[RMDB]
RNA sequence: GGGAACGACUCGAGUAGAGUCGAAAACGUGGAACUGUAAGAGUACUCAGAAAUGGGCAGAAUUGGAACUCGUUGAUGGCGUCUAGCAAGUGGGUUUGCGGAAUGAAUCUCUGAAUCACAGGUUGUGCAUAGAGAUGCAGCAUCUGCCUUGCAGAAAGGUAAAAUUACCAUUCGUGGUAAUUUUACCAAAAGAAACAACAACAACAAC
Reactivity to 2A3 in 0.01 (KOAc 150mM, MgCl2 10mM, bicine 150mM(pH8.5), 24C), signal-to-noise 6, nucleotides 027 to 156: c040g010u070g020g030a050a050c040u030g020u110a090a020g030a020g060u060a060c030u030c090a020g040a080a080a030u090g020g010g000c020a020g050a080a080u080u100g030g020a040a040c020u020c100g030u020u060g050a070u020g030g030c020g030u010c030u030a040g010c030a060a020g020u090g040g050g030u040u070u060g020c000g010g050a070a060u080g020a020a030u030c000u000c010u040g060a110a040u080c020a020c010a070g170g050u210u120g030u070g000c020a020u030a110g010a010g000a020u020g010c030a020g000c000a040u000c000u040g070c010c030u020u050g000c010a000g060a060a070a010
Reactivity to DMS in 0.01 (KOAc 150mM, MgCl2 10mM, bicine 150mM(pH8.5), 24C), signal-to-noise 4, nucleotides 027 to 156: c060g030u000g010g020a060a110c050u010g010u000a080a110g000a130g020u000a050c040u000c030a110g010a070a100a120u010g000g020g040c010a080g010a080a120u010u010g020g010a080a070c030u000c040g040u010u010g010a120u010g010g020c050g040u000c040u010a110g030c050a050a100g020u000g020g020g030u000u000u000g020c030g000g000a080a120u000g000a060a070u010c020u000c020u000g000a080a080u000c030a020c020a150g020g010u000u000g030u010g030c080a160u000a100g010a070g010a130u000g000c030a050g010c050a070u000c030u000g020c020c040u000u000g010c010a050g020a030a080a160